[RMDB]
RNA sequence: GGGAACGACUCGAGUAGAGUCGAAAACAGUAUGCCUUCGGGCAUACUGAAACCAGAGGGUAUCUGGCCCACGCACCCAUGCGUGCCGGGAAUCCCAUCCCAAAACGGAUGUCUUCGGACAUCCGAAUCUUUAGACAGAGUUCGCUCUGUCUAAAGAAAAAGAAACAACAACAACAAC
Reactivity to 2A3 in 0.01 (KOAc 150mM, MgCl2 10mM, bicine 150mM(pH8.5), 24C), signal-to-noise 5, nucleotides 027 to 126: c000a000g010u000a010u000g000c000c020u060u120c300g110g000g000c000a000u000a000c010u000g000a050a000a010c040c010a020g100a080g100g090g040u120a070u080c010u010g030g000c050c070c010a000c000g000c000a060c000c090c040a060u230g000c040g020u020g000c020c030g030g000g010a030a060u060c000c000c020a070u050c010c010c010a030a090a010a010c010g010g010a000u000g000u000c010u040u080c260g100g000a000c010a010u000c000c000g000a000a030
Reactivity to DMS in 0.01 (KOAc 150mM, MgCl2 10mM, bicine 150mM(pH8.5), 24C), signal-to-noise 5, nucleotides 027 to 126: c000a010g000u000a000u000g000c000c000u000u010c200g040g020g020c000a010u000a000c000u000g000a030a050a080c040c040a030g000a060g010g020g020u010a060u000c000u000g000g010c300c090c060a030c050g000c000a050c130c100c180a100u000g010c050g000u000g000c120c130g000g000g000a090a100u000c010c000c010a160u000c010c000c010a050a060a080a120c000g010g010a010u000g000u000c000u000u000c180g010g000a010c000a000u000c000c000g000a030a020
The record gives the reactivity of an RNA of 177 nucleotides to 2A3 and DMS. Conditions: 150 mM KOAc, 10 mM MgCl2 and 150 mM bicine (pH 8.5), 24 C. For 2A3 the reverse transcriptase was SuperScript II with manganese. DMS adducts were read by reverse transcription with MarathonRT. Reactivities are given for positions 27 through 126. The data come from the RNA Mapping Database (RMDB), library M2PK50.